[RMDB]
RNA sequence: GGGAACGACUCGAGUAGAGUCGAAAACGUUUCCCUAGGGUUUGAGCGGUCGAACCCAGGGGGAGUGUGACCCAGGUACCGCCGUAGAAACUGGGUUACGACGCCUACCCGGGAUUCAAACCCGGUCCCCCUCAGAGGUGACUCUGAGUGAAAGGUCGAUAAUUCAGUAGUUCGCUACUGAAUUAUCAAAAGAAACAACAACAACAAC
Reactivity to 2A3 in 0.01 (KOAc 150mM, MgCl2 10mM, bicine 150mM(pH8.5), 24C), signal-to-noise 4, nucleotides 027 to 156: c020g020u010u020u050c010c010c030u050a260g000g000g000u020u020u010g020a020g020c030g010g040u110c000g020a020a010c000c000c030a000g000g000g000g010g020a110g010u100g000u000g020a020c000c000c000a000g040g010u020a040c020c030g090c030c050g170u290a070g110a170a300a030c000u000g000g000g000u000u000a010c010g010a010c000g030c010c010u060a080c050c010c020g010g000g010a080u270u190c110a110a090a130c000c000c000g000g020u040c000c000c000c010c010u000c000a010g010a000g000g020u040g020a040c000u000c000u010g000a000g000u060g020a160a070a030g080g040u150c080
Reactivity to DMS in 0.01 (KOAc 150mM, MgCl2 10mM, bicine 150mM(pH8.5), 24C), signal-to-noise 2, nucleotides 027 to 156: c010g010u010u010u000c010c000c000u000a120g010g030g000u010u000u030g000a070g040c150g010g030u020c040g000a020a050c000c000c010a230g000g000g010g040g020a070g010u000g040u000g020a130c020c000c020a060g000g000u000a050c020c040g020c040c200g000u000a180g020a130a080a190c030u000g010g040g000u010u000a040c000g020a060c030g020c040c020u000a100c060c000c030g000g000g000a180u000u020c090a110a090a150c010c010c000g010g000u020c000c000c010c030c000u000c010a010g010a030g000g010u010g010a260c010u000c000u000g000a020g000u010g000a090a140a090g000g000u000c140